Source: RMDB library OK2TST, as collected in RNAgym. An RNA of 177 nucleotides, treated with DMS and read out base by base. DMS adducts were read by reverse transcription with MarathonRT. Values cover nucleotides 27 to 126. Conditions: 150 mM KOAc, 10 mM MgCl2 and 150 mM bicine (pH 8.5), 24 C. For DMS, 1,011 sequencing reads were counted.
RNA sequence: GGGAACGACUCGAGUAGAGUCGAAAAACAGCUCCCAGCGUGAGUGACUCAGAAGAUGGGUGAUUUCUGCAUUUCCAACUGAGAUACCAGGUUCAUCUCACUGGGGAGUGUCGGAAAGUGGGUGCAGCAUGUCAGGUCUCUUCGGAGACCUGACAUGAAAAGAAACAACAACAACAAC
Reactivity to DMS in 0.01 (KOAc 150mM, MgCl2 10mM, bicine 150mM(pH8.5), 24C), signal-to-noise 1, nucleotides 027 to 126: a180c070a170g020c070u000c000c010c000a140g050c040g000u010g000a090g020u000g020a070c060u000c020a020g010a140a090g030a070u000g000g000g000u000g000a130u010u000u000c040u000g000c030a050u000u000u020c040c050a010a090c130u020g000a000g020a110u010a090c070c150a040g000g020u000u000c130a050u000c000u020c000a030c060u000g060g020g000g000a020g000u000g010u000c000g020g000a060a050a050g010u000g000g000g000u000g030c080a150g000